Structure probing data (2A3 and DMS) for a 207-nucleotide construct. The DMS profile rests on 4,285 reads. The reactions ran in a buffer of 150 mM KOAc, 10 mM MgCl2 and 150 mM bicine (pH 8.5), at 24 C. Values cover nucleotides 27 to 156. Reactivities are rounded to 0.1 and cut off at 0 and 3.
RNA sequence: GGGAACGACUCGAGUAGAGUCGAAAACUUAUGAUGGCUACUGCACUUACGGCUCUCUCUGUAGCGGGAGCUGUUGGUCUUGGCGUAUUGGUGGCAGGCGUAACCGCACUUCUGGGUCUUAUUCCGUAUGGAGUUACCCAGAUCGGUCUCGGCAUUGCAAAUGGUUUGGGUUCGCCCAAACCAUUUGAAAAGAAACAACAACAACAAC
Reactivity to 2A3 in 0.01 (KOAc 150mM, MgCl2 10mM, bicine 150mM(pH8.5), 24C), signal-to-noise 2, nucleotides 027 to 156: c000u050u070a000u250g060a070u120g050g000c010u040a050c050u110g070c060a010c030u050u040a020c000g000g010c020u000c000u000c020u000c050u260g220u260a050g080c040g010g000g000a010g000c000u010g020u010u000g000g000u010c000u030u070g040g000c070g050u100a060u060u130g050g000u030g060g000c050a030g040g020c000g020u020a060a030c000c020g010c030a050c090u040u000c010u010g000g000g020u030c050u110u090a030u030u020c000c010g050u100a250u300g000g000a010g000u000u000a000c000c000c000a000g000a000u040c000g050g010u010c040u000c080g040g000c030a020u000u110g060
Reactivity to DMS in 0.01 (KOAc 150mM, MgCl2 10mM, bicine 150mM(pH8.5), 24C), signal-to-noise 1, nucleotides 027 to 156: c060u000u020a040u010g010a110u000g030g040c000u000a050c070u010g010c030a090c020u010u000a030c020g010g000c000u000c010u000c020u000c070u020g050u000a100g080c170g010g000g000a020g030c010u000g010u000u000g000g000u000c020u000u000g000g040c010g000u000a080u000u010g000g030u000g000g000c010a020g010g000c040g020u000a050a050c020c010g020c160a120c060u000u000c000u000g000g020g000u010c130u000u010a080u020u000c020c010g010u000a110u000g030g010a030g000u000u000a060c000c000c030a030g010a010u010c010g000g000u000c060u000c030g000g040c030a170u020u010g020